[RMDB]
RNA sequence: GGGAACGACUCGAGUAGAGUCGAAAAUAGAGGAUAUUGAUUAUGUACCCCUAAAAUCUGCAGUCUGUAUUACAGCUUGUAAUUUAGGGGGCGCUGUUUGUAGGAAGCAUGCUACAGAGUACAGAGACGACCAGCCGGUUCGCCGGCUGGAAAAGAAACAACAACAACAAC
Reactivity to DMS in 0.01 (KOAc 150mM, MgCl2 10mM, bicine 150mM(pH8.5), 24C), signal-to-noise 2, nucleotides 027 to 129: u000a000g010a020g020g010a070u030a190u050u050g020a120u010u000a010u040g080u060a160c010c020c000c000u000a070a040a040a130u000c080u010g000c070a040g010u010c010u000g020u020a000u030u060a000c070a020g020c040u030u020g070u020a040a010u000u020u000a020g040g130g040g050g000c100g040c050u020g000u020u000u060g020u000a030g010g040a000a000g000c050a020u130g020c100u030a020c050a020g020a150g010u040a070c050a040g000a080g090a110c060g030a110
Reactivity to 2A3 in 0.01 (KOAc 150mM, MgCl2 10mM, bicine 150mM(pH8.5), 24C), signal-to-noise 3, nucleotides 027 to 129: u140a030g160a020g080g160a000u100a110u120u030g020a030u190u070a030u290g040u300a290c010c040c020c020u000a000a000a000a090u030c010u120g030c000a030g060u020c000u020g050u150a250u040u260a230c000a000g060c040u090u110g020u010a000a000u010u000u030a030g010g000g000g040g000c020g000c050u070g050u100u070u080g040u000a010g020g020a020a020g040c090a010u200g060c020u010a030c020a000g010a010g000u000a020c030a030g050a020g000a110c110g010a010